[RMDB]
RNA sequence: GGGAACGACUCGAGUAGAGUCGAAAAGUUCGCUGACUACGAUGCACCGUUUGCGUUCGUAGAUCUCGACGCGAUGUGGGGCAAUGCCGAUCAACUGCUUGCGCGCGCCGGCGACAAGCCGAUCCGGCUGAUAUCAAUCAUUCGUGAUUGAUAUCAGAAAAGAAACAACAACAACAAC
Reactivity to DMS in 0.01 (KOAc 150mM, MgCl2 10mM, bicine 150mM(pH8.5), 24C), signal-to-noise 9, nucleotides 027 to 126: g010u010u000c020g020c110u000g010a090c020u000a020c020g020a040u000g010c000a070c300c290g000u010u010u010g010c010g000u000u000c010g020u000a020g000a090u000c040u000c040g010a060c070g010c060g000a040u000g020u000g000g000g000g010c210a080a070u010g010c010c030g000a060u000c060a100a120c150u000g000c020u000u000g000c050g010c020g010c060g010c080c080g000g010c010g000a090c050a030a040g020c010c210g000a050u000c060c050g010g010
Reactivity to 2A3 in 0.01 (KOAc 150mM, MgCl2 10mM, bicine 150mM(pH8.5), 24C), signal-to-noise 9, nucleotides 027 to 126: g040u050u030c010g010c110u030g020a030c000u010a010c020g020a020u030g000c020a040c100c230g150u120u280u140g020c040g030u030u070c010g000u010a050g010a240u020c030u010c030g040a030c020g000c020g050a060u090g070u120g070g010g000g010c030a060a120u150g010c010c010g020a050u060c030a040a110c050u080g010c000u040u060g030c050g000c000g000c020g030c080c050g080g000c010g030a100c030a050a000g000c000c020g010a030u020c050c020g020g000